[RMDB]
This 177-nucleotide RNA was probed chemically with 2A3 and DMS. Reactivities are given for positions 27 through 126. The RNA was probed in 150 mM KOAc, 10 mM MgCl2 and 150 mM bicine (pH 8.5) at 24 C.
RNA sequence: GGGAACGACUCGAGUAGAGUCGAAAAACUUUUGGAAACUAGUGGAUGUGGUGUCAAAAAAGGCGAACACAAAACACUUUCGCAGCUUUUUUUCCUGCCCUUGUAUUUGAUGUCUUUGGUGUAGGAGAAGCACAAAUCAAUUCGUUGAUUUGUGCUUAAAAGAAACAACAACAACAAC
Reactivity to 2A3 in 0.01 (KOAc 150mM, MgCl2 10mM, bicine 150mM(pH8.5), 24C), signal-to-noise 6, nucleotides 027 to 126: a000c020u060u060u090u110g060g030a010a030a030c050u030a060g020u000g040g000a050u020g020u010g010g030u070g010u060c030a070a130a050a060a050a080g050g000c040g050a180a010c040a000c020a020a080a120a000c020a010c000u050u100u060c090g000c080a060g060c070u100u050u040u040u010u110u020c000c010u010g010c010c010c010u020u030g100u060a200u050u120u160g160a110u180g050u030c040u030u060u120g050g010u140g010u030a010g000g030a030g030
Reactivity to DMS in 0.01 (KOAc 150mM, MgCl2 10mM, bicine 150mM(pH8.5), 24C), signal-to-noise 4, nucleotides 027 to 126: a070c070u010u010u020u010g010g000a060a030a060c090u000a090g020u010g000g000a080u000g000u000g000g020u010g020u020c050a010a050a060a050a140a090g020g010c030g020a080a170c120a040c120a060a030a070a190c080a030c050u000u010u010c050g040c090a060g030c040u000u000u000u010u000u010u000c000c000u000g000c010c010c020u000u030g010u010a060u010u010u030g010a090u010g010u010c020u000u000u010g010g030u010g030u000a020g000g010a050g000